The record gives the reactivity of an RNA of 177 nucleotides to DMS.
Values cover nucleotides 27 to 126.
It was measured as part of the RMDB library M2PK90.
Conditions: 150 mM KOAc, 10 mM MgCl2 and 150 mM bicine (pH 8.5), 24 C.
[RMDB]
RNA sequence: GGGAACGACUCGAGUAGAGUCGAAAAGCUCAGUGUGUGUCGCCCCGUCGUCUAGUGCUGGUUCUAGGGCUGGGGCGUCAGCAUCCAGGUCUGACGGGACGGGCAGUAUCUCGCCAACAACGAUAAAGAUCUAUUAAUAAUUCGUUAUUAAUAGAUCAAAAGAAACAACAACAACAAC
Reactivity to DMS in 0.01 (KOAc 150mM, MgCl2 10mM, bicine 150mM(pH8.5), 24C), signal-to-noise 7, nucleotides 027 to 126: g000c020u000c030a120g010u000g010u000g010u000g010u000c010g010c010c000c010c000g020u000c020g010u010c010u010a030g020u000g020c080u000g000g010u000u000c020u000a050g000g000g010c030u010g030g000g000g020c020g010u000c020a060g010c020a040u000c070c090a100g000g010u000c050u010g010a060c050g000g000g010a060c070g000g000g000c040a060g010u000a090u000c040u000c040g010c040c020a060a050c080a050a070c050g010a120u010a070a120a160